[RMDB]
Source: RMDB library M2PK50, as collected in RNAgym. Chemical mapping of a 177-nucleotide RNA with DMS and 2A3. The RNA was probed in 150 mM KOAc, 10 mM MgCl2 and 150 mM bicine (pH 8.5) at 24 C. The 2A3 profile rests on 2,105 reads.

RNA sequence: GGGAACGACUCGAGUAGAGUCGAAAAUCUUCUCCCUUCGGGGAGAAGAAAACAUAAACAUGAGAAAAUGCAGCUCUGGCACAGCAGCCAUAAAAGUAAAAAAAAGUCACAUCUUCGGAUGUGACAAGAAUAGACAUCUGUUCGCAGAUGUCUAUUCAAAAGAAACAACAACAACAAC
Reactivity to DMS in 0.01 (KOAc 150mM, MgCl2 10mM, bicine 150mM(pH8.5), 24C), signal-to-noise 1, nucleotides 027 to 126: u000c000u020u000c000u000c000c000c000u000u010c240g010g050g000g000a000g000a000a000g000a010a040a120a060c140a070u010a090a090a120c090a030u000g000a130g000a100a050a070a080u000g010c030a030g000c040u000c060u010g010g010c030a010c070a030g020c070a110g000c040c080a060u000a030a040a120a080g000u000a020a000a000a030a010a090a090a080g000u000c000a010c000a000u000c000u000u030c150g020g000a010u010g000u000g010a000c010a000a000
Reactivity to 2A3 in 0.01 (KOAc 150mM, MgCl2 10mM, bicine 150mM(pH8.5), 24C), signal-to-noise 2, nucleotides 027 to 126: u010c000u000u010c000u010c000c010c000u000u040c280g080g000g000g020a020g000a010a000g000a000a000a000a000c020a020u230a080a160a010c080a070u170g020a020g080a120a160a040a010u120g020c010a040g020c020u040c020u080g010g040c020a010c020a040g070c020a010g000c020c010a030u120a020a120a020a000g110u220a070a080a050a020a000a000a020a030g000u000c000a000c000a000u000c010u030u090c240g110g000a000u000g000u000g000a000c000a000a000